This 207-nucleotide RNA was probed chemically with 2A3 and DMS. Values cover nucleotides 27 to 156. It was measured as part of the RMDB library RNAMAK. High 2A3 reactivity points to a flexible backbone, as in loops and unpaired stretches. 2A3 adducts were read by reverse transcription with SuperScript II with manganese.

RNA sequence: GGGAACGACUCGAGUAGAGUCGAAAACGUGGUAAUAAGUUCGCUUAUUACCACGAAAACCUUUGUGAGUGACAUGCUGGUGGUCAGCCCAUUGGGCUGCCAUGCAGCAACAGCACUCACUCUGGUAAACAAUGAUGUGUGUUCGCACACAUCAUUGCGAUGAUACUCCGUUCGCGGAGUAUCAUCGAAAAGAAACAACAACAACAAC
Reactivity to 2A3 in 0.01 (KOAc 150mM, MgCl2 10mM, bicine 150mM(pH8.5), 24C), signal-to-noise 4, nucleotides 027 to 156: c020g000u000g000g000u000a000a000u000a000a000g030u040u080c150g000c130u000u000a000u000u000a010c000c000a000c000g000a000a000a000a000c000c000u010u000u010g010u000g000a000g040u000g020a090c030a100u050g010c000u000g000g010u010g010g040u300c070a000g000c010c000c090a300u140u300g000g000g000c000u000g000c000c000a010u070g050c000a000g000c000a000a000c030a000g060c000a000c000u000c000a000c000u000c000u000g000g000u060a130a060a010c000a000a000u000g000a000u000g010u000g010u000g050u050u080c210g040c120a000c000a000c000a010u010c000a000u000u000g000
Reactivity to DMS in 0.01 (KOAc 150mM, MgCl2 10mM, bicine 150mM(pH8.5), 24C), signal-to-noise 1, nucleotides 027 to 156: c030g030u020g030g000u000a000a030u000a000a010g020u000u000c300g010c010u010u000a000u000u000a000c000c000a020c000g010a000a070a100a080c000c000u000u010u000g020u000g010a030g010u000g040a040c100a300u000g020c000u000g030g000u010g010g010u000c040a020g010c000c000c030a300u010u020g080g050g000c020u000g000c000c000a020u000g020c000a010g050c020a000a010c130a210g000c010a010c010u000c020a030c000u000c050u000g000g010u000a070a110a210c000a020a030u000g000a030u020g000u000g030u000g000u000u010c300g060c000a010c000a030c000a000u000c000a000u000u000g010